[RMDB]
RNA sequence: GGGAACGACUCGAGUAGAGUCGAAAAGCCCAGCACAUUUGCAGCUGCGGCCUUUAAGGACGCCCCCCCCCGACCACGGUAUAGCGAGGCCUUCCUCCGGGCGGUCUUCGCGCGCGCGAUCAAAGAGCAACGCAAUGUACUUCGGUACAUUGCGUUGAAAAGAAACAACAACAACAAC
Reactivity to DMS in 0.01 (KOAc 150mM, MgCl2 10mM, bicine 150mM(pH8.5), 24C), signal-to-noise 2, nucleotides 027 to 126: g010c000c000c020a120g040c040a100c160a200u020u010u020g000c110a060g010c060u010g040c010g020g000c000c020u000u010u000a130a060g010g020a070c030g000c000c020c000c020c000c000c000c030c030g020a040c080c040a020c060g030g010u010a110u030a160g000c000g030a000g000g010c020c010u000u020c000c000u000c190c170g000g010g080c300g010g010u010c010u010u000c000g020c020g010c040g000c030g000c020g000a080u010c070a110a160a210g000a120g000
The record gives the reactivity of an RNA of 177 nucleotides to DMS. Values cover nucleotides 27 to 126. The reactions ran in a buffer of 150 mM KOAc, 10 mM MgCl2 and 150 mM bicine (pH 8.5), at 24 C.